[RMDB]
RNA sequence: GGGAACGACUCGAGUAGAGUCGAAAAGAAUAAAAUAGCUGUGUAUCAUCCUGCCCGUCGGGGGAGCCACAGUUAAAUUCAAAAGACAAGGCAGGGAAAGGGACAGUAAAGAUUAGUAACUGUCCAAGAUGGUGAGUAGUUUCGACUACUCACCAUCAAAAGAAACAACAACAACAAC
Reactivity to DMS in 0.01 (KOAc 150mM, MgCl2 10mM, bicine 150mM(pH8.5), 24C), signal-to-noise 2, nucleotides 027 to 126: g000a060a070u000a100a080a100a140u030a000g000c000u000g000u020g000u000a020u000c070a200u040c030c000u010g000c050c150c170g040u060c010g000g000g000g000g000a100g000c100c010a000c000a000g030u010u000a000a070a020u000u000c070a140a120a070a080g000a060c150a070a020g000g000c070a020g000g000g020a020a080a130g000g000g020a000c020a000g010u010a060a080a130g000a180u040u020a050g010u050a110a090c000u030g000u000c000c000a030a050
Reactivity to 2A3 in 0.01 (KOAc 150mM, MgCl2 10mM, bicine 150mM(pH8.5), 24C), signal-to-noise 1, nucleotides 027 to 126: g040a010a010u250a080a220a030a060u180a000g020c000u000g000u000g050u040a100u120c040a120u100c020c000u000g080c010c010c040g130u160c020g050g000g000g020g000a000g000c010c010a000c000a010g070u000u050a000a030a010u090u040c060a000a080a120a000g070a020c080a090a000g040g000c040a030g010g000g010a090a050a070g120g000g000a010c020a000g010u050a050a130a000g120a120u090u160a010g050u050a030a010c000u000g000u000c000c000a000a010
The record gives the reactivity of an RNA of 177 nucleotides to DMS and 2A3. Reactivities are rounded to 0.1 and cut off at 0 and 3. For 2A3 the reverse transcriptase was SuperScript II with manganese. High DMS reactivity at an A or C suggests that its Watson-Crick edge is free.